RNA sequence: GGGAACGACUCGAGUAGAGUCGAAAAUCAUCGCUCCGGCGAUCGGCAUCGCCAGCAUGGCACCGAGGCCCUGUGGGAUGAUAUGCACCCCCGAUUGCAUCGGUGAUUGGUGCAACACUUGCUGGAGAUAGCCAAAGCCAUUCGUGGCUUUGGCUAUAAAAGAAACAACAACAACAAC
Reactivity to DMS in 0.01 (KOAc 150mM, MgCl2 10mM, bicine 150mM(pH8.5), 24C), signal-to-noise 2, nucleotides 027 to 126: u010c060a080u000c050g000c030u000c080c160g000g030c010g000a030u000c050g020g010c100a080u020c180g020c010c000a100g020c060a050u000g000g030c000a120c050c060g020a130g000g020c060c060c100u010g010u020g020g020g030a050u000g000a120u020a180u030g030c010a030c020c000c010c000c010g020a050u000u000g010c040a300u000c000g000g000u010g010a220u010u010g010g000u000g000c000a020a070c140a060c120u000u000g010c010u010g010g010a060g020
Reactivity to 2A3 in 0.01 (KOAc 150mM, MgCl2 10mM, bicine 150mM(pH8.5), 24C), signal-to-noise 1, nucleotides 027 to 126: u040c020a000u080c040g050c120u010c030c010g050g000c030g070a100u020c050g090g000c030a150u100c070g010c050c000a040g110c080a120u050g020g000c020a020c040c030g030a070g120g000c000c000c070u000g030u150g010g040g030a020u020g020a020u040a080u180g000c000a000c000c010c000c000c000g000a010u050u190g130c140a050u050c010g060g000u110g060a210u060u160g000g000u020g010c000a020a030c020a010c040u050u080g000c010u020g000g030a070g000